[RMDB]
RNA sequence: GGGAACGACUCGAGUAGAGUCGAAAAGCUGAGGCAUUUAACAAGGCUAUAAACGCAAGUAGUGACGGACCUAAACGUAGCCUGACCGUUUACCCAGACUGUUCUGGUGACGCAGUUGUGGUAAACGAAGAAAUCCCGUCCUAUGCGCAUGGUGCACUGCUUUAGCCUCGUUCGCGAGGCUAAAGCAAAAAGAAACAACAACAACAAC
Reactivity to 2A3 in 0.01 (KOAc 150mM, MgCl2 10mM, bicine 150mM(pH8.5), 24C), signal-to-noise 1, nucleotides 027 to 156: g030c060u070g000a050g090g000c060a100u030u020u210a080a080c060a010a060g030g000c020u030a030u110a190a170a000c010g000c000a000a090g070u010a010g010u050g070a010c040g020g030a030c000c070u120a010a030a120c030g070u030a010g020c000c000u050g040a060c020c000g000u020u000u000a000c000c000c000a000g070a090c010u050g020u030u060c050u020g060g070u120g000a020c020g000c000a010g020u010u090g100u110g020g020u020a030a030a030c000g000a010a010g000a030a040a000u080c040c000c010g000u000c000c000u030a010u050g000c030g000c060a080u120g100g000u040g100c040a040c040

Description:
Conditions: 150 mM KOAc, 10 mM MgCl2 and 150 mM bicine (pH 8.5), 24 C. Structure probing data (2A3) for a 207-nucleotide construct. 2A3 adducts were read by reverse transcription with SuperScript II with manganese. Values cover nucleotides 27 to 156.